[RMDB]
Description:
This 207-nucleotide RNA was probed chemically with DMS and 2A3.
RNA sequence: GGGAACGACUCGAGUAGAGUCGAAAACAUUCAGGGGCUCCAGGAUGGUCCAUCAGGGGACCAUACCCCCAUGAUGACCUGGCCUGGCAUAGGAUACCAGAUGUGUCCACAGGCCCAGGGAGGAAGAGCCACUCAUAGUCCACCACCUGAUGGCCGCCCAUAAUUGAUCAUUCGUGAUCAAUUAUGGAAAAGAAACAACAACAACAAC
Reactivity to DMS in 0.01 (KOAc 150mM, MgCl2 10mM, bicine 150mM(pH8.5), 24C), signal-to-noise 1, nucleotides 027 to 156: c070a140u000u000c070a070g000g000g010g070c040u020c030c080a210g030g000a180u000g010g010u000c000c000a100u000c020a140g000g000g040g030a070c010c200a070u000a150c040c010c010c000c000a150u000g030a110u000g020a160c010c040u000g000g030c000c000u000g010g020c130a110u000a070g090g030a150u000a030c000c020a300g010a140u010g020u030g010u010c030c000a280c030a030g000g010c040c000c010a020g000g000g000a110g000g010a080a080g000a020g000c010c050a100c060u000c060a080u010a110g010u000c050c040a080c080c050a130c010c010u000g000a050u000g000g020c010c010g050c170
Reactivity to 2A3 in 0.01 (KOAc 150mM, MgCl2 10mM, bicine 150mM(pH8.5), 24C), signal-to-noise 4, nucleotides 027 to 156: c020a000u120u200c050a020g010g050g030g020c040u060c110c030a060g060g060a120u050g000g030u080c070c000a030u050c040a030g030g040g020g030a020c050c040a010u130a160c000c020c010c030c030a070u120g020a040u040g030a020c000c000u010g050g000c000c000u010g010g010c050a080u210a110g000g010a010u000a020c030c040a070g100a260u280g090u000g010u000c010c010a010c010a040g000g000c080c050c000a000g010g010g010a060g020g020a060a080g020a020g090c040c010a040c010u080c030a110u120a080g050u020c010c000a030c020c030a070c000c020u020g000a020u020g040g000c010c000g070c020

Conditions: 150 mM KOAc, 10 mM MgCl2 and 150 mM bicine (pH 8.5), 24 C. For 2A3, 2,425 sequencing reads were counted. Source: RMDB library OK3TST, as collected in RNAgym.